Chemical mapping of a 177-nucleotide RNA with DMS and 2A3. The reactions ran in a buffer of 150 mM KOAc, 10 mM MgCl2 and 150 mM bicine (pH 8.5), at 24 C. 2A3 adducts were read by reverse transcription with SuperScript II with manganese.

RNA sequence: GGGAACGACUCGAGUAGAGUCGAAAAGGCGAGGAGUAUACGCCGCGUCAGGGACUAUAUGCUAACUUAAGUUCUAGGGAGACGGAAUUUCGUUACGUCGCUCAUUUAUCAAUAUUAUCAUCCUCACCUUCCGUCUAUGCUUCGGCAUAGACGGAAGAAAAGAAACAACAACAACAAC
Reactivity to DMS in 0.01 (KOAc 150mM, MgCl2 10mM, bicine 150mM(pH8.5), 24C), signal-to-noise 2, nucleotides 027 to 126: g020g020c000g000a000g030g040a050g010u000a030u070a190c180g010c020c000g030c080g000u000c110a060g000g000g000a120c020u000a010u000a060u000g000c140u000a100a190c160u000u010a060a060g000u000u000c010u000a100g060g020g000a060g000a000c140g000g000a090a010u010u000u000c240g020u010u000a140c030g000u000c090g040c010u060c020a180u000u000u000a170u010c100a040a080u020a140u000u010a110u040c060a100u020c000c000u000c040a140c080
Reactivity to 2A3 in 0.01 (KOAc 150mM, MgCl2 10mM, bicine 150mM(pH8.5), 24C), signal-to-noise 3, nucleotides 027 to 126: g030g000c030g010a030g040g010a040g070u020a030u050a140c070g000c000c000g040c000g040u060c020a050g020g000g010a030c060u010a030u010a010u300g090c050u080a030a060c060u040u100a090a020g000u070u020c000u050a040g060g000g010a110g030a000c000g080g040a120a080u080u140u180c040g030u060u050a010c000g010u010c000g020c010u000c010a050u040u080u160a160u040c060a030a100u050a060u230u070a050u090c030a030u000c000c070u060c010a080c000